[RMDB]
RNA sequence: GGGAACGACUCGAGUAGAGUCGAAAAAUUUUAUAAAGCACGUCCGCACUAAUGGUGGUUACAAUUCUUGGCAUUUAGUCGAGGGUGAACUAUUGGUGCAAGACUUACGCUUAAAUAAGCUCCUGCAACCGCCGUAACUUCGGUUACGGCAAAAGAAACAACAACAACAAC
Reactivity to DMS in 0.01 (KOAc 150mM, MgCl2 10mM, bicine 150mM(pH8.5), 24C), signal-to-noise 4, nucleotides 027 to 129: a000u110u030u020u030a060u020a160a060a010g030c020a060c160g010u030c000c170g080c020a040c020u020a050a010u030g000g080u020g010g070u000u020a140c180a140a080u000u000c030u000u020g020g060c020a190u110u090u060a140g030u020c020g030a010g020g000g010u000g010a020a010c020u060a020u000u000g030g000u030g030c020a080a080g020a040c010u000u000a100c220g040c030u010u060a030a110a040u040a050a040g000c060u030c030c000u070g020c150a090a140c040c120
Reactivity to 2A3 in 0.01 (KOAc 150mM, MgCl2 10mM, bicine 150mM(pH8.5), 24C), signal-to-noise 6, nucleotides 027 to 129: a000u030u010u010u020a120u010a020a040a000g000c000a000c040g000u000c000c010g000c000a000c010u000a000a000u000g020g040u020g040g080u130u140a090c120a130a040u060u010c020u000u000g020g000c000a110u120u070u300a060g000u000c000g000a000g000g030g000u010g030a020a000c010u010a000u000u000g010g000u000g000c030a040a030g000a000c000u050u090a040c080g020c000u020u030a110a030a000u050a030a000g050c040u000c010c000u020g050c020a030a090c070c050

Chemical mapping of a 170-nucleotide RNA with DMS and 2A3. For DMS the reverse transcriptase was MarathonRT. The reactions ran in a buffer of 150 mM KOAc, 10 mM MgCl2 and 150 mM bicine (pH 8.5), at 24 C. The data come from the RNA Mapping Database (RMDB), library 15KLIB. 2A3 adducts were read by reverse transcription with SuperScript II with manganese.